Structure probing data (DMS and 2A3) for a 177-nucleotide construct.
The reactions ran in a buffer of 150 mM KOAc, 10 mM MgCl2 and 150 mM bicine (pH 8.5), at 24 C.
Values cover nucleotides 27 to 126.
The data come from the RNA Mapping Database (RMDB), library M2PK50.
Values are in units of 0.01, from 0 to 300, in steps of 10.
The 2A3 profile rests on 81,058 reads.
2A3 adducts were read by reverse transcription with SuperScript II with manganese.

[RMDB]
RNA sequence: GGGAACGACUCGAGUAGAGUCGAAAACGAUUAGCAUUCGUGCUAAUCGAAUCAGGUAGUACCUAUCUCUAUUACCUGUAGUGGCCAACGUCCCGACAGAGAAUCGAGUCCUGUUCGCAGGACUCAACACCUAGAUCUAAUUCGUUAGAUCUAGGUGAAAAGAAACAACAACAACAAC
Reactivity to DMS in 0.01 (KOAc 150mM, MgCl2 10mM, bicine 150mM(pH8.5), 24C), signal-to-noise 9, nucleotides 027 to 126: c020g010a010u000u000a000g010c000a030u000u010c210g030u000g010c000u000a000a000u000c000g010a060a060u000c010a010g000g010u000a010g010u000a040c200c130u010a130u000c050u000c060u000a010u000u000a010c010c000u000g010u010a070g010u000g010g010c120c080a070a110c130g010u000c000c000c000g010a110c250a070g000a060g010a060a110u010c170g000a020g010u000c000c000u000g000u000u010c180g020c010a010g000g000a010c000u000c000a040a120
Reactivity to 2A3 in 0.01 (KOAc 150mM, MgCl2 10mM, bicine 150mM(pH8.5), 24C), signal-to-noise 4, nucleotides 027 to 126: c010g000a000u000u010a000g000c010a010u010u060c230g110u070g000c000u000a000a000u000c000g000a010a070u050c000a000g020g000u010a010g010u020a040c020c040u110a140u140c040u000c010u010a020u030u020a010c010c000u020g010u040a070g050u070g130g060c070c050a070a030c050g060u010c000c000c000g020a050c050a030g070a000g030a060a110u200c130g000a010g000u000c000c000u010g020u040u020c160g020c060a000g010g000a000c000u000c000a000a000